[RMDB]
RNA sequence: GGGAACGACUCGAGUAGAGUCGAAAAAGAAAGUUCGCUUUCUACCACGGGGUCUCGGGAGCUCUGACAACGCAUCGAUCCUGAAGCCUCCACGGGGGAGCGUUGGGUAGAGCAUCGAUCGAGACGGAGGCACCCAGAAAUAUCCGUUCGCGGAUAAACUCACGUUUGUUUUCGAACAAACGUGAGUAAAAGAAACAACAACAACAAC
Reactivity to 2A3 in 0.01 (KOAc 150mM, MgCl2 10mM, bicine 150mM(pH8.5), 24C), signal-to-noise 2, nucleotides 027 to 156: a010g060a010a020a000g050u100u090c110g050c060u000u050u000c030u030a090c060c040a040c050g050g000g000g000u030c030u000c030g010g040g010a010g010c010u000c060u140g240a050c010a000a010c010g060c030a230u230c100g100a300u190c010c000u010g070a100a030g030c020c000u080c070c000a010c050g010g000g000g030g020a070g010c030g010u020u010g030g050g180u300a030g000a040g070c050a300u040c080g140a100u080c000g010a000g010a030c010g010g010a030g000g010c010a000c000c010c010a010g130a010a140a030u090a010u030c000c000g000u040u090c280g020c050g080g050a020u140a190a060